[RMDB]
Background
This 207-nucleotide RNA was probed chemically with 2A3.
RNA sequence: GGGAACGACUCGAGUAGAGUCGAAAACGGUACUACGAAUUGAUGCAAGGUGUGGAGCGACCUUAAACAGUUCUGGUGGUGCUCUGAAUGGAGUGCUCUACUGAGAUUAUAAAAUAGAAGGUAAGCUGAAGGGGAAAUGAGUUCGCUCAUUUCCCAAGAGGUCUAUUGACUUCGGUCAAUAGACCUCAAAAGAAACAACAACAACAAC
Reactivity to 2A3 in 0.01 (KOAc 150mM, MgCl2 10mM, bicine 150mM(pH8.5), 24C), signal-to-noise 3, nucleotides 027 to 156: c040g010g020u040a030c030u020a000c020g080a080a030u070u020g040a030u100g120c050a020a030g010g000u060g010u080g070g010a020g010c020g010a030c000c000u060u110a080a010a010c020a030g020u030u020c020u060g020g030u000g020g030u000g000c000u000c020u040g130a090a080u170g030g020a030g010u070g020c020u010c010u030a030c040u040g030a010g010a080u040u090a060u180a150a130a100a030u110a050g040a090a020g030g040u030a040a010g060c050u060g090a060a040g000g030g000g000a000a000a000u000g000a000g000u010u030c100g050c020u000c000a000u000u000u000c000c010c000a010a000
Reactivities are rounded to 0.1 and cut off at 0 and 3.
Conditions: 150 mM KOAc, 10 mM MgCl2 and 150 mM bicine (pH 8.5), 24 C.
The 2A3 profile rests on 1,578 reads.
2A3 adducts were read by reverse transcription with SuperScript II with manganese.